[RMDB]
RNA sequence: GGGAACGACUCGAGUAGAGUCGAAAACUUCCGAUGUCGCGUGCGCGACCGCAUCGGCGUCGUCGCCGACGAUGUCGCCGAUCAGCACCAUCUUCGGGAACGCCUGGCGCUUGCUCUUCGUCGCGUAGCGUGAAAAUAUGUUCGCAUAUUUUCACGCAAAAGAAACAACAACAACAAC
Reactivity to DMS in 0.01 (KOAc 150mM, MgCl2 10mM, bicine 150mM(pH8.5), 24C), signal-to-noise 9, nucleotides 027 to 126: c150u000u000c010c010g020a070u000g010u000c100g020c100g020u010g010c060g010c050g010a030c040c100g020c120a070u000c030g000g000c160g020u000c050g020u000c010g030c160c200g010a060c030g010a030u000g010u000c030g010c080c040g010a030u010c100a110g010c030a080c040c030a070u010c060u000u000c030g010g010g010a060a110c100g000c050c020u000g010g010c030g010c050u000u000g010c050u000c070u000u000c080g010u000c030g010c060g010u010a130
Reactivity to 2A3 in 0.01 (KOAc 150mM, MgCl2 10mM, bicine 150mM(pH8.5), 24C), signal-to-noise 9, nucleotides 027 to 126: c020u070u000c010c010g050a070u080g060u180c190g010c060g080u080g030c070g020c060g100a060c010c030g010c020a050u040c020g020g000c010g030u050c020g030u030c030g080c170c130g070a180c040g000a020u030g020u030c010g000c000c010g030a060u040c040a020g010c010a010c020c010a040u040c020u070u030c020g010g000g060a070a050c040g020c020c030u030g040g000c020g000c040u040u140g020c010u020c020u110u090c040g050u020c010g000c030g100u060a040
The record gives the reactivity of an RNA of 177 nucleotides to DMS and 2A3. The DMS profile rests on 28,183 reads. High 2A3 reactivity points to a flexible backbone, as in loops and unpaired stretches. 2A3 adducts were read by reverse transcription with SuperScript II with manganese. The RNA was probed in 150 mM KOAc, 10 mM MgCl2 and 150 mM bicine (pH 8.5) at 24 C.